[RMDB]
Source: RMDB library TTRDEL, as collected in RNAgym. The record gives the reactivity of an RNA of 177 nucleotides to DMS. The RNA was probed in 150 mM KOAc, 10 mM MgCl2 and 150 mM bicine (pH 8.5) at 24 C. DMS adducts were read by reverse transcription with MarathonRT.
RNA sequence: GGGAACGACUCGAGUAGAGUCGAAAAGAUAUGGAAUACUUCGAUAAGUCGUGUGUCGGAAACGACAUUCGACUUUUGACGAAGUUCCUAAGUCAAAGGUCUCCUCUCCUUCGGGAGAGGAGACCAACUUCUUGUAGCUGUUCGCAGCUACAAGAAGAAAAGAAACAACAACAACAAC
Reactivity to DMS in 0.01 (KOAc 150mM, MgCl2 10mM, bicine 150mM(pH8.5), 24C), signal-to-noise 1, nucleotides 027 to 126: g020a060u010a300u000g000g010a060a070u010a050c020u010u010c000g000a100u000a030a010g010u000c000g010u000g000u010g010u010c000g020g000a150a100a200c000g000a000c000a000u010u000c010g000a010c000u010u010u010u010g020a220c100g000a020a000g000u000u000c000c000u000a090a130g010u000c020a040a100a080g020g020u000c000u010c000c000u000c000u000c000c010u000u010c150g020g000g010a030g020a000g000g030a010g000a000c010c020a000a030